Conditions: 150 mM KOAc, 10 mM MgCl2 and 150 mM bicine (pH 8.5), 24 C. Structure probing data (DMS and 2A3) for a 207-nucleotide construct.
[RMDB]
RNA sequence: GGGAACGACUCGAGUAGAGUCGAAAAGAUGGGAAACAGCAGCAGGUGAGUCCGCCUUAUGUGAAGGAUCGGCUGAAACACGAGGAAAUACUGAGCCAACGCAAGACGGUAGCCGAACAGUAGCAACAAAACGCUUACGUGUUCGCACGUAAGCGAAGCUCAUGUAUAUGUUCGCAUAUACAUGAGCAAAAGAAACAACAACAACAAC
Reactivity to DMS in 0.01 (KOAc 150mM, MgCl2 10mM, bicine 150mM(pH8.5), 24C), signal-to-noise 3, nucleotides 027 to 156: g010a110u000g000g000g020a150a090a110c060a060g030c040a060g000c060a090g050g020u010g010a110g020u000c040c060g000c020c050u000u000a050u000g020u020g020a100a170g010g000a100u010c040g000g020c020u010g000a160a100a050c030a050c080g020a080g000g000a040a050a090u000a070c050u000g000a110g020c000c020a070a120c040g000c040a030a070g020a120c050g020g010u000a060g020c030c010g000a020a070c050a070g020u000a030g020c040a070a110c070a060a090a070a090c020g010c000u000u000a020c000g030u000g020u000u000c300g000c010a020c000g000u010a020a020g010c010g010a000a050
Reactivity to 2A3 in 0.01 (KOAc 150mM, MgCl2 10mM, bicine 150mM(pH8.5), 24C), signal-to-noise 7, nucleotides 027 to 156: g030a020u060g000g000g030a040a060a050c040a020g040c020a010g020c010a010g000g050u030g030a050g050u040c040c030g030c010c030u130u140a140u110g090u060g050a050a030g050g030a080u080c030g030g000c040u050g010a110a050a010c080a030c090g050a040g040g100a040a080a010u120a090c050u060g020a010g010c020c020a030a030c060g010c060a050a020g050a020c050g030g030u040a030g030c020c020g010a010a010c020a030g050u100a010g030c040a000a080c010a050a150a010a000c020g000c000u010u000a000c000g010u020g010u040u040c080g020c060a000c000g000u010a000a000g000c000g000a010a000

For DMS, 6,693 sequencing reads were counted. The data come from the RNA Mapping Database (RMDB), library M2RFPK. For 2A3 the reverse transcriptase was SuperScript II with manganese. Reactivities are rounded to 0.1 and cut off at 0 and 3.